Source: RMDB library 15KLIB, as collected in RNAgym. The record gives the reactivity of an RNA of 170 nucleotides to DMS and 2A3. The 2A3 profile rests on 5,551 reads. The reactions ran in a buffer of 150 mM KOAc, 10 mM MgCl2 and 150 mM bicine (pH 8.5), at 24 C. 2A3 adducts were read by reverse transcription with SuperScript II with manganese. Reactivities are given for positions 27 through 129.
RNA sequence: GGGAACGACUCGAGUAGAGUCGAAAAGAAUGGGAAAGAGGAGGGCGGAAAAAGAGGAGCGGGCCUCCCGAUCCGAGGGGCCCGGUGGCCUGAUCUGGAGGGCACUCCGGGCCGUAAGGAAGAAAAGUGGCGACUUCGUUCGCGAAGUCGAAAAGAAACAACAACAACAAC
Reactivity to DMS in 0.01 (KOAc 150mM, MgCl2 10mM, bicine 150mM(pH8.5), 24C), signal-to-noise 2, nucleotides 027 to 129: g020a030a040u000g030g000g020a080a050a080g000a070g000g000a000g000g070g000c100g000g080a060a050a020a080a070g020a030g010g020a080g000c130g010g000g020c060c030u000c050c050c050g010a140u000c060c020g040a120g010g020g010g040c010c020c050g040g020u010g030g000c000c000u000g010a120u050c150u050g010g040a170g020g010g000c090a030c030u030c010c020g030g020g060c020c010g000u030a010a120g010g000a070a040g000a060a040a060a070g030u070g000g000
Reactivity to 2A3 in 0.01 (KOAc 150mM, MgCl2 10mM, bicine 150mM(pH8.5), 24C), signal-to-noise 2, nucleotides 027 to 129: g000a030a030u100g010g000g000a030a040a040g010a030g010g020a050g010g020g000c020g040g050a060a040a000a020a000g140a030g000g000a030g020c030g000g020g000c000c000u040c000c010c000g040a060u030c020c060g000a020g010g050g020g000c000c010c000g010g020u030g030g020c000c020u050g020a050u030c070u070g090g060a060g080g020g000c040a080c110u030c000c000g000g010g000c010c020g050u040a010a010g030g010a000a040g030a030a090a020a020g090u110g050g010